The record gives the reactivity of an RNA of 177 nucleotides to 2A3 and DMS. For 2A3 the reverse transcriptase was SuperScript II with manganese. 2A3 is a SHAPE reagent: it acylates the 2'-hydroxyl of flexible nucleotides of all four kinds. For 2A3, 40,688 sequencing reads were counted. For DMS, 38,599 sequencing reads were counted. It was measured as part of the RMDB library OK2TST.

[RMDB]
RNA sequence: GGGAACGACUCGAGUAGAGUCGAAAAACGUCGGGAUCAUUGCAUCAACUGCUGCUUGUUCGUAAGCACUUAAUUCACCAAUUGGUAGUAAUUCUUCAACACCAUUACGUCCCAAACGAACAGGUUGAUCCUAAUUACGAUUCGUCGUAAUUAGGAUAAAAGAAACAACAACAACAAC
Reactivity to 2A3 in 0.01 (KOAc 150mM, MgCl2 10mM, bicine 150mM(pH8.5), 24C), signal-to-noise 9, nucleotides 027 to 126: a000c070g050u070c060g030g020g020a040u040c020a070u030u150g030c010a040u030c040a080a100c050u070g030c010u020g010c010u060u030g010u040u020c020g030u070a070a060g030c010a010c030u050u130a060a080u120u070c050a040c100c010a060a200u070u060g070g000u010a110g030u020a060a140u110u050c040u090u080c050a050a040c010a030c040c010a020u040u070a040c040g050u040c000c010c020a020a040a010c030g020a010a010c000a010g050g030u060u110g050
Reactivity to DMS in 0.01 (KOAc 150mM, MgCl2 10mM, bicine 150mM(pH8.5), 24C), signal-to-noise 9, nucleotides 027 to 126: a100c110g010u010c120g010g000g010a060u000c050a080u010u000g010c050a070u010c080a060a100c140u000g000c070u000g000c010u000u000g000u000u000c040g010u000a090a100g010c060a050c100u000u000a050a090u000u000c070a070c060c050a100a080u000u010g010g010u000a070g010u000a050a090u000u000c100u000u000c070a050a040c050a040c020c020a040u000u010a070c130g000u000c010c010c010a060a090a060c050g000a020a020c040a030g010g010u000u010g010